[RMDB]
RNA sequence: GGGAACGACUCGAGUAGAGUCGAAAAGCAGUAUCUCGUUAGGCGAGGCUCCUAUACAAACACAGGUUGCUGAUCUGACGACGUCGAGAGACCCCCAAGAUUAGGACAGGAUAUAUCGAACCAAGGUGAACCUGUCCAGGGUUCGCCCUGGACAGAAUCAAUGCUAUUGCUUCGGCAAUAGCAUUGAAAAAGAAACAACAACAACAAC
Reactivity to DMS in 0.01 (KOAc 150mM, MgCl2 10mM, bicine 150mM(pH8.5), 24C), signal-to-noise 2, nucleotides 027 to 156: g000c070a140g010u000a020u020c000u000c040g010u000u020a060g030g020c070g030a190g010g010c060u000c040c020u020a040u000a210c060a120a080a130c140a040c060a050g060g000u000u000g020c050u000g010a190u010c030u000g010a140c040g000a020c060g010u000c030g000a130g000a220g000a150c000c010c010c060c030a060a060g020a150u000u000a070g030g000a120c060a150g050g020a130u000a050u000a100u000c020g020a060a090c060c010a040a090g000g020u000g020a050a150c060c000u030g000u000c020c050a020g010g030g010u010u010c250g040c030c000c000u000g000g000a060c030a030g000a060a120
Reactivity to 2A3 in 0.01 (KOAc 150mM, MgCl2 10mM, bicine 150mM(pH8.5), 24C), signal-to-noise 2, nucleotides 027 to 156: g090c070a030g030u150a120u070c030u010c020g020u060u150a040g020g060c050g010a060g040g010c050u050c010c040u100a090u090a190c140a080a260a030c130a010c010a080g050g000u130u100g040c000u010g030a150u040c010u020g010a010c020g000a020c060g050u070c010g010a040g000a050g010a060c000c000c000c010c050a030a020g000a080u080u100a030g050g000a030c040a050g060g090a020u040a000u020a020u150c020g030a070a010c030c030a040a000g050g000u070g010a040a060c000c000u010g010u030c000c020a000g010g020g000u050u010c090g090c020c010c000u010g000g000a000c000a020g020a000a010